[RMDB]
RNA sequence: GGGAACGACUCGAGUAGAGUCGAAAAGAGGAUACUGUUCAUUUUAAAGGAGACUCUAAGUUUACAUAGAUACAUGAAAUGCUGUGAGUAAAUUUGUGCACCAAUUUGCAAGUGCCAGGCACAAAGUCUUUAAUAAACACUACUUGGCUACCAUGUGUAGUACUAUGACCUUCGGGUCAUAGUACUAAAAAGAAACAACAACAACAAC
Reactivity to DMS in 0.01 (KOAc 150mM, MgCl2 10mM, bicine 150mM(pH8.5), 24C), signal-to-noise 2, nucleotides 027 to 156: g000a090g010g010a100u000a060c070u010g030u010u000c080a070u000u020u000u020a050a120a170g010g000a130g010a060c040u000c040u010a070a120g020u000u000u000a090c040a070u000a120g030a130u010a050c080a080u000g000a090a100a230u000g060c050u000g010u010g010a130g000u020a050a030a140u000u000u000g010u010g020c030a080c080c050a050a150u010u010u000g010c110a020a140g000u000g010c000c050a090g020g000c020a050c050a020a060a110g000u010c050u000u020u000a060a100u000a030a070a050c040a070c050u010a020c020u000u010g020g020c000u000a100c030c020a100u000g040u000g040
Reactivity to 2A3 in 0.01 (KOAc 150mM, MgCl2 10mM, bicine 150mM(pH8.5), 24C), signal-to-noise 3, nucleotides 027 to 156: g050a000g040g010a040u040a100c060u090g030u100u100c050a100u040u110u130u180a060a100a040g060g000a050g020a020c010u000c010u060a090a070g040u050u090u030a070c070a040u170a060g100a070u140a060c040a030u080g070a050a050a080u060g000c010u010g030u040g110a020g010u080a020a080a110u070u100u050g020u050g020c010a030c080c020a090a100u070u120u180g020c060a080a080g000u030g090c080c070a020g000g060c030a010c000a020a050a000g020u020c010u000u110u060a140a070u150a060a070a020c060a010c020u150a040c010u050u100g040g040c010u110a000c000c030a070u070g050u040g030
Chemical mapping of a 207-nucleotide RNA with DMS and 2A3.
2A3 is a SHAPE reagent: it acylates the 2'-hydroxyl of flexible nucleotides of all four kinds.
For 2A3, 1,376 sequencing reads were counted.
For DMS the reverse transcriptase was MarathonRT.
Reactivities are given for positions 27 through 156.
For DMS, 3,223 sequencing reads were counted.
The reactions ran in a buffer of 150 mM KOAc, 10 mM MgCl2 and 150 mM bicine (pH 8.5), at 24 C.
2A3 adducts were read by reverse transcription with SuperScript II with manganese.